[RMDB]
RNA sequence: GGGAACGACUCGAGUAGAGUCGAAAAAACCGCGUCUUGCAUUCCAAUGCAGCUCGCAUGAUCUCAUCGACCAUUGAUAACAGAGCAUUGCAUUUCUAAAACCUACGGUAGCAGUGAGACAUACUGCAGGAAGCUACUGCAGGAGACAGCGGGAAAAUGUUGAAUCAGAGUUCGCUCUGAUUCAACAAAAAGAAACAACAACAACAAC
Reactivity to 2A3 in 0.01 (KOAc 150mM, MgCl2 10mM, bicine 150mM(pH8.5), 24C), signal-to-noise 2, nucleotides 027 to 156: a010a000c000c020g000c000g010u000c000u000u030g010c000a070u010u130c010c000a040a050u020g020c000a000g030c020u040c040g060c070a090u030g060a130u040c040u040c100a130u140c070g080a050c020c050a080u080u100g030a040u110a150a050c040a110g020a020g040c110a100u090u070g030c020a030u040u130u010c050u080a070a070a100a130c010c020u030a020c130g050g020u060a060g050c090a030g010u020g070a090g010a060c020a050u080a040c020u020g000c020a000g000g020a080a010g000c050u100a070c120u030g000c010a000g040g040a010g000a030c030a030g000c070g000g000g050a030a200a010a010
Reactivity to DMS in 0.01 (KOAc 150mM, MgCl2 10mM, bicine 150mM(pH8.5), 24C), signal-to-noise 1, nucleotides 027 to 156: a030a060c020c040g050c020g040u000c000u020u010g000c070a170u000u000c020c050a090a110u000g000c020a230g000c030u000c070g090c120a070u000g000a010u000c000u020c210a160u010c090g010a080c030c040a080u010u030g030a090u000a110a250c090a070g000a060g030c020a110u000u060g010c020a000u010u000u000c030u000a030a170a140a210c020c010u000a000c010g010g000u000a010g020c030a150g040u000g000a140g020a060c030a200u000a030c030u010g040c060a060g000g000a080a210g000c040u010a000c090u030g010c000a080g020g000a100g000a070c030a090g010c020g020g020g000a050a000a090a160
Structure probing data (2A3 and DMS) for a 207-nucleotide construct.
For DMS, 1,646 sequencing reads were counted.
Values are in units of 0.01, from 0 to 300, in steps of 10.
Source: RMDB library OK3TST, as collected in RNAgym.
For 2A3 the reverse transcriptase was SuperScript II with manganese.
The RNA was probed in 150 mM KOAc, 10 mM MgCl2 and 150 mM bicine (pH 8.5) at 24 C.